[RMDB]
RNA sequence: GGGAACGACUCGAGUAGAGUCGAAAAGGGGAUGUAGCAUAUUAGUUUGAACAAUCGGCACAUUUUUGAUGUGUGAAUUAUGAGAAAUUUUAUGCACGAAUCGUAUAUCAUACGACAGUCCAUCAAAUACUCCCCCACAAUUCGUUGUGGGGGAGUAAAAAGAAACAACAACAACAAC
Reactivity to 2A3 in 0.01 (KOAc 150mM, MgCl2 10mM, bicine 150mM(pH8.5), 24C), signal-to-noise 2, nucleotides 027 to 126: g080g000g000g000a000u020g000u100a030g000c010a000u000a000u020u120a020g120u000u000u120g030a070a020c000a040a010u030c020g080g000c000a000c020a030u100u090u000u020u120g070a040u000g010u000g010u070g090a280a020u110u030a070u120g150a050g070a100a030a000u000u000u000u000a010u000g000c000a060c070g100a100a020u000c000g000u010a010u020a010u100c160a070u000a020c000g030a020c020a050g000u000c000c000a050u060c000a060a030a040
Reactivity to DMS in 0.01 (KOAc 150mM, MgCl2 10mM, bicine 150mM(pH8.5), 24C), signal-to-noise 2, nucleotides 027 to 126: g000g000g020g010a040u000g030u040a200g060c000a000u010a010u000u000a020g000u000u000u000g030a270a040c130a010a010u030c130g040g000c000a000c010a030u000u000u040u000u130g020a000u000g010u010g000u000g000a040a030u000u000a030u010g000a300g000a010a020a020u000u000u000u000a000u000g010c010a100c080g050a040a300u000c010g000u020a000u000a070u010c190a000u000a030c000g000a040c100a070g000u020c020c010a050u000c070a020a030a190
Chemical mapping of a 177-nucleotide RNA with 2A3 and DMS.
Values cover nucleotides 27 to 126.
Conditions: 150 mM KOAc, 10 mM MgCl2 and 150 mM bicine (pH 8.5), 24 C.